[RMDB]
RNA sequence: GGGAACGACUCGAGUAGAGUCGAAAAGAUAUGGAGUUGUACUACCCACCCUAGCAUCGGAAACGAUGUAAUAGGAGGUACACCUCCUAAGUCAAAAGGUGACUUCUCGUUCGCGAGAAGUCACCAACAACAGUUUAUACUUCGGUAUAAACUGUUGAAAAGAAACAACAACAACAAC
Reactivity to 2A3 in 0.01 (KOAc 150mM, MgCl2 10mM, bicine 150mM(pH8.5), 24C), signal-to-noise 2, nucleotides 027 to 126: g090a020u170a140u280g000g000a010g020u030u020g000u040a030c000u130a130c050c060c040a150c020c010c000u000a010g010c000a010u020c010g020g010a070a040a010c010g000a000u020g000u020a060a080u020a030g020g030a070g000g000u020a000c010a000c010c000u010c000c000u060a210a040g120u060c060a010a020a020a190g000g000u010g000a020c000u020u000c000u000c000g080u100u100c300g000c040g050a000g020a040a000g000u000c010a010c010c010a000a000
Reactivity to DMS in 0.01 (KOAc 150mM, MgCl2 10mM, bicine 150mM(pH8.5), 24C), signal-to-noise 5, nucleotides 027 to 126: g010a060u010a130u020g000g000a030g020u000u000g010u000a010c010u010a110c080c070c100a300c140c000c000u000a060g000c010a000u000c000g010g000a050a070a190c010g010a010u000g010u000a090a060u010a010g000g010a120g000g010u000a010c050a020c070c010u000c000c000u010a020a100g010u000c060a090a100a130a110g000g020u000g000a000c000u000u000c000u000c000g010u000u010c230g010c000g000a010g000a020a000g000u000c010a000c000c010a010a060

An RNA of 177 nucleotides, treated with 2A3 and DMS and read out base by base.
For 2A3, 4,395 sequencing reads were counted.
It was measured as part of the RMDB library TTRDEL.
For DMS, 6,368 sequencing reads were counted.